[RMDB]
An RNA of 177 nucleotides, treated with DMS and read out base by base. The RNA was probed in 150 mM KOAc, 10 mM MgCl2 and 150 mM bicine (pH 8.5) at 24 C.
RNA sequence: GGGAACGACUCGAGUAGAGUCGAAAAAGGAGCACAUACUCAACAGACCAACAGGACUGACACUGCCCACCAGUUUGGAACAGGCAAUGCGCAAAGGACUGGUCGAAGGUGUGGUCAUCUCCAAGGAAAGGGUGUACUCUUUCGAGAGUACACCCUUAAAAGAAACAACAACAACAAC
Reactivity to DMS in 0.01 (KOAc 150mM, MgCl2 10mM, bicine 150mM(pH8.5), 24C), signal-to-noise 1, nucleotides 027 to 126: a050g010g000a100g010c160a030c060a050u000a120c010u000c040a050a080c120a110g030a030c020c020a210a090c150a090g000g000a130c000u000g040a030c030a060c010u000g020c040c060c210a170c000c040a160g020u000u010u020g020g030a120a070c060a060g000g010c050a000a000u010g010c100g000c130a040a150a060g000g000a040c010u000g000g000u000c000g040a060a140g000g020u000g000u000g000g010u000c010a090u000c010u000c000c000a150a130g010g000a110
Reactivities are given for positions 27 through 126.
DMS adducts were read by reverse transcription with MarathonRT.